[RMDB]
RNA sequence: GGGAACGACUCGAGUAGAGUCGAAAAGUAUGUAUGGAUAACCAUACGUACAAAUAAUUGCCUCAUGGUGGUGGCUGGGGGCACCCUCAUGGGGGUGGGUGUUCAAAAUAAAGAUCCGAAAGGAUCAGCAAUCGAUGAUCUUCGGAUCAUCGAUUGCAAAAGAAACAACAACAACAAC
Reactivity to 2A3 in 0.01 (KOAc 150mM, MgCl2 10mM, bicine 150mM(pH8.5), 24C), signal-to-noise 1, nucleotides 027 to 126: g000u030a000u000g000u000a000u000g000g010a200u100a300a300c010c010a000u000a000c000g000u000a000c000a000a090a010u300a010a040u140u250g040c010c000u020c010a030u170g000g000u080g040g000u010g140g000c080u010g040g000g000g070g000c000a000c010c000c000u020c000a030u040g050g000g000g020g030u000g060g000g040u020g000u040u080c010a000a000a000a140u200a050a170a000g000a000u010c000c000g030a060a030a080g000g000a020u000c000a010